[RMDB]
The data come from the RNA Mapping Database (RMDB), library TTRINS.
Structure probing data (2A3 and DMS) for a 177-nucleotide construct.
2A3 is a SHAPE reagent: it acylates the 2'-hydroxyl of flexible nucleotides of all four kinds.
2A3 adducts were read by reverse transcription with SuperScript II with manganese.
Reactivities are given for positions 27 through 126.
RNA sequence: GGGAACGACUCGAGUAGAGUCGAAAAGAUAUGGAAUUCGAUUUGAAAGUUCCACGUUGAAAUUACUGGCUACUCGGAAACGAGUAGCCAGUAAUGGAGUGGACUUUCAACCCGAAUUCCUAAGUCACAUAAUGCAUAGGUUCGCCUAUGCAUUAUGAAAAGAAACAACAACAACAAC
Reactivity to 2A3 in 0.01 (KOAc 150mM, MgCl2 10mM, bicine 150mM(pH8.5), 24C), signal-to-noise 1, nucleotides 027 to 126: g040a020u190a080u180g000g000a010a010u020u030c010g020a060u020u040u020g030a030a020a010g090u300u120c020c000a000c000g230u230u040g000a060a020a010u010u020a010c050u010g020g030c030u020a050c000u040c050g000g100a120a180a050c020g010a040g060u000a000g030c000c000a000g000u000a000a000u000g000g000a010g000u000g000g000a010c000u000u000u040c000a000a010c030c000c000g010a000a000u020u010c000c000u000a150a020g060u000c000a010
Reactivity to DMS in 0.01 (KOAc 150mM, MgCl2 10mM, bicine 150mM(pH8.5), 24C), signal-to-noise 2, nucleotides 027 to 126: g010a060u000a300u000g000g010a020a000u000u000c000g010a120u000u000u010g000a020a010a030g010u010u010c000c000a000c010g010u000u020g010a160a150a020u000u000a000c010u010g000g010c000u000a010c010u000c010g010g000a130a150a250c010g000a020g000u000a000g010c010c000a000g010u010a000a010u000g010g000a070g010u000g000g000a030c000u000u000u000c000a000a000c060c040c010g010a010a010u000u000c000c000u000a000a080g010u010c050a300